[RMDB]
RNA sequence: GGGAACGACUCGAGUAGAGUCGAAAAGACGUUCGCUGAUUCGUCAGCCGCAUGCCCAGGUGGCCGCGAUCUUCAAGGCUACGGCGCGGAUAGGUCCGCGCUGAUCGUUUUCCUCCAACGACGCUAUAAAAGGAACGAAGGUUCGCCUUCGUUCCAACUCCUGUACAGUGUUCGCACUGUACAGGAGAAAAGAAACAACAACAACAAC
Reactivity to 2A3 in 0.01 (KOAc 150mM, MgCl2 10mM, bicine 150mM(pH8.5), 24C), signal-to-noise 3, nucleotides 027 to 156: g050a040c020g030u080u080c050g090c020u020g020a040u050u060c120g060u030c100a010g000c030c040g030c060a030u150g000c000c000c000a010g000g010u010g010g020c000c030g140c060g030a020u000c010u060u030c020a020a000g000g000c000u010a010c000g000g000c000g000c000g010g000a010u090a180g160g080u040c000c000g000c000g000c010u000g000a010u010c000g000u090u060u050u020c050c050u120c070c020a070a090c080g070a020c030g010c090u100a060u060a280a080a070a050g000g000a000a000c000g000a000a000g010g000u030u120c180g070c010c000u000u000c000g010u000u000c000c000a000a000
Reactivity to DMS in 0.01 (KOAc 150mM, MgCl2 10mM, bicine 150mM(pH8.5), 24C), signal-to-noise 1, nucleotides 027 to 156: g000a080c020g000u030u000c020g000c020u000g000a070u000u000c150g000u000c020a070g020c000c060g030c060a090u000g030c030c020c020a220g030g000u000g020g030c010c010g000c100g020a020u000c040u010u000c070a080a300g020g000c000u000a060c000g010g000c000g010c000g040g030a130u010a180g040g020u000c000c020g020c000g030c010u010g000a030u000c010g030u030u010u010u000c020c040u020c090c050a090a080c040g000a060c040g090c070u000a130u000a050a090a100a180g000g000a020a000c010g020a020a000g010g030u000u000c300g060c020c000u010u000c000g020u000u000c000c000a000a040
The data come from the RNA Mapping Database (RMDB), library M2RFPK. The record gives the reactivity of an RNA of 207 nucleotides to 2A3 and DMS. For 2A3 the reverse transcriptase was SuperScript II with manganese. The DMS profile rests on 2,658 reads. The reactions ran in a buffer of 150 mM KOAc, 10 mM MgCl2 and 150 mM bicine (pH 8.5), at 24 C.